[RMDB]
RNA sequence: GGGAACGACUCGAGUAGAGUCGAAAAAUAAAGAGCGUAAACGCGUCAUUGAGUGACGUGAAGAUCAUCCAAGUGUGCUGUCUACAGUCGUAGAUAGCGCACAUUACGCUAAGAUGAUCAUUAAAAAGAAAUUGUCUUGGUUCGCCAAGACAAUUUCAAAAGAAACAACAACAACAAC
Reactivity to DMS in 0.01 (KOAc 150mM, MgCl2 10mM, bicine 150mM(pH8.5), 24C), signal-to-noise 2, nucleotides 027 to 126: a060u020a080a020a030g000a070g000c010g030u010a040a090a160c090g000c010g000u000c000a080u010u000g030a120g010u000g020a000c010g030u000g010a050a090g000a020u020c000a000u000c010c130a060a060g020u010g010u020g010c000u000g000u010c000u000a020c020a170g010u020c300g010u000a000g020a030u000a000g030c000g010c000a000c010a050u010u000a030c040g020c020u020a080a080g000a010u000g010a010u000c000a160u060u000a030a030a040a060a090
Reactivity to 2A3 in 0.01 (KOAc 150mM, MgCl2 10mM, bicine 150mM(pH8.5), 24C), signal-to-noise 3, nucleotides 027 to 126: a010u260a010a110a030g090a020g010c010g040u040a040a040a040c020g000c010g030u000c020a020u080u300g180a120g300u080g010a000c010g000u020g090a060a020g010a010u000c020a010u000c060c060a100a080g000u000g020u000g000c000u010g000u030c000u010a060c070a230g190u300c160g000u070a000g010a010u000a000g000c000g000c000a000c000a000u000u010a020c000g000c010u000a010a010g000a000u010g040a000u000c010a080u080u300a140a150a010a000a010
The record gives the reactivity of an RNA of 177 nucleotides to DMS and 2A3.
For DMS the reverse transcriptase was MarathonRT.
Conditions: 150 mM KOAc, 10 mM MgCl2 and 150 mM bicine (pH 8.5), 24 C.
For 2A3 the reverse transcriptase was SuperScript II with manganese.
Source: RMDB library M2PK90, as collected in RNAgym.